[RMDB]
RNA sequence: GGGAACGACUCGAGUAGAGUCGAAAAUGUUAGAGUGUAAUUUCUGGAAAACAAGGCCAUACUGGAAUCCGGAGGAGAGAAAGAUGGCUUACACUGGGUAUGAGUACAGUGUAGUUGAGAUGUGCAACGUCACGCGUCCAUUCGUGGACGCGUGACGAAAAGAAACAACAACAACAAC
Reactivity to 2A3 in 0.01 (KOAc 150mM, MgCl2 10mM, bicine 150mM(pH8.5), 24C), signal-to-noise 1, nucleotides 027 to 126: u130g070u150u170a050g000a050g120u080g000u110a030a030u000u240u000c050u050g140g300a210a140a160a040c170a040a130g150g010c200c080a080u000a190c100u000g050g150a000a100u070c000c000g190g040a020g050g050a150g000a000g000a130a080a000g000a000u020g000g010c000u000u000a000c000a050c070u000g000g150g000u300a020u270g020a070g000u070a190c000a000g000u100g000u000a100g020u000u000g000a080g030a070u000g000u000g050c000a050a010